[RMDB]
RNA sequence: GGGAACGACUCGAGUAGAGUCGAAAAAGCCAUCAACCACACGUUUCGCACGUGGACAGUGGAUUCUGAUGGUCAUAUUACAGUGUGCUAGCGAGGGAACUCCGUCCGGGGGUGAACCGCGAAACAGUACCGGACUCACCAAGUAGCAUCCUGUCUUUAUAUGGACCAAGUUCGCUUGGUCCAUAUAAAAAGAAACAACAACAACAAC
Reactivity to 2A3 in 0.01 (KOAc 150mM, MgCl2 10mM, bicine 150mM(pH8.5), 24C), signal-to-noise 1, nucleotides 027 to 156: a000g000c000c010a000u050c010a070a190c000c020a010c000a000c090g030u040u120u210c300g030c010a040c050g020u140g020g100a030c010a010g020u010g080g020a220u200u090c050u030g000a000u000g000g010u020c050a050u070a080u180u050a000c000a000g030u000g040u000g040c020u010a070g130c010g010a090g000g020g000a030a030c060u050c220c000g010u010c040c020g010g000g010g040g000u130g120a020a120c040c000g070c030g090a050a050a000c040a040g040u010a070c000c000g010g000a000c000u030c050a190c000c020a050a000g010u000a010g000c010a000u040c010c010u000g010u010c020u000u030